[RMDB]
Description
The record gives the reactivity of an RNA of 207 nucleotides to DMS and 2A3. It was measured as part of the RMDB library OK3TST. For DMS the reverse transcriptase was MarathonRT. For DMS, 2,252 sequencing reads were counted. For 2A3, 2,488 sequencing reads were counted.
RNA sequence: GGGAACGACUCGAGUAGAGUCGAAAAAGAGACAGGUGAAGGGUACUGACUUGUUUUGACCAUGGUGCAGUGAGCCCAGAUCCAGGUCUUUAUAACAAGCCAUUUAGCUUUGUUUAUUUCUUGCACAUGGGCUAUUGCAAGACUACUUUUGACCAAACGUAUCAUUGGCAUUCGUGCCAAUGAUACGAAAAGAAACAACAACAACAAC
Reactivity to DMS in 0.01 (KOAc 150mM, MgCl2 10mM, bicine 150mM(pH8.5), 24C), signal-to-noise 1, nucleotides 027 to 156: a170g000a080g010a070c000a130g000g020u000g000a290a100g000g020g080u000a090c080u000g020a080c030u000u000g020u000u000u000u000g030a110c110c020a140u000g050g020u000g020c030a080g000u000g000a190g000c030c010c040a100g010a160u000c010c000a150g000g000u010c010u000u000u000a110u030a100a060c030a000a020g010c010c020a130u010u010u000a040g010c030u000u000u000g020u020u000u000a080u020u030u000c010u000u020g020c030a090c120a130u000g000g040g020c010u000a040u000u000g010c030a070a040g010a050c080u000a090c040u000u000u000u020g010a120c060c040a060a040a280
Reactivity to 2A3 in 0.01 (KOAc 150mM, MgCl2 10mM, bicine 150mM(pH8.5), 24C), signal-to-noise 4, nucleotides 027 to 156: a000g050a000g010a010c030a010g030g000u000g010a030a010g040g020g000u060a010c010u010g040a020c010u050u070g120u190u220u100u300g100a070c030c040a070u080g040g030u170g100c010a010g010u040g080a030g010c000c000c000a010g000a020u000c000c010a020g040g040u000c000u000u060u040a070u040a010a010c020a000a000g000c040c070a160u140u200u160a050g000c040u130u120u110g020u080u100u020a110u040u140u020c020u000u010g030c020a040c020a160u090g110g010g040c070u130a060u090u060g000c000a010a020g000a010c000u110a060c020u180u140u090u150g080a070c030c000a060a040a060
The RNA was probed in 150 mM KOAc, 10 mM MgCl2 and 150 mM bicine (pH 8.5) at 24 C.